Structure probing data (DMS and 2A3) for a 207-nucleotide construct. The reactions ran in a buffer of 150 mM KOAc, 10 mM MgCl2 and 150 mM bicine (pH 8.5), at 24 C. DMS (dimethyl sulfate) methylates the pairing face of unpaired adenines and cytosines. The data come from the RNA Mapping Database (RMDB), library OK3TST.
RNA sequence: GGGAACGACUCGAGUAGAGUCGAAAAGCUAUGUGAAUGAAACUAUGCUUCUGCUGGAAGAUUACUCCAAUACGCACAGUUCGCGAUUUGUGACCGUGAAAGAACUUUGGCAUAAACCCGGUAGCACGUGGCUGUAUACAACAAGUUCUAAUGUAAACAUAACUAGUUGGUUCGCCAACUAGUUAUGAAAAGAAACAACAACAACAAC
Reactivity to DMS in 0.01 (KOAc 150mM, MgCl2 10mM, bicine 150mM(pH8.5), 24C), signal-to-noise 3, nucleotides 027 to 156: g000c040u000a070u000g020u010g020a140a110u000g010a150a070a060c020u000a050u010g010c010u000u010c060u010g030c080u010g010g040a090a100g000a130u000u000a100c070u000c010c030a040a170u000a070c170g010c020a040c010a070g010u000u000c040g020c050g000a120u010u000u000g040u000g010a130c070c040g020u000g000a090a090a090g000a030a040c030u000u000u000g000g040c030a050u000a040a030a070c000c010c010g000g010u010a130g010c120a110c040g030u010g010g000c030u000g010u000a070u010a050c000a040a060c070a020a040g010u000u000c020u000a100a100u000g010u000a090a060a180
Reactivity to 2A3 in 0.01 (KOAc 150mM, MgCl2 10mM, bicine 150mM(pH8.5), 24C), signal-to-noise 5, nucleotides 027 to 156: g000c020u020a030u080g040u010g070a110a130u090g050a080a070a030c030u020a040u120g010c000u050u050c040u050g080c040u040g030g010a080a050g050a230u120u100a100c070u040c020c000a020a050u120a100c060g010c020a000c020a070g030u130u120c020g020c030g050a100u040u080u100g050u040g070a130c010c020g000u040g040a090a100a070g010a030a040c010u080u050u110g010g000c030a020u060a040a060a050c020c070c010g060g010u050a020g020c020a010c050g020u020g020g000c020u010g030u110a090u020a070c090a080a010c010a050a060g000u070u000c000u090a100a040u100g060u170a070a050a000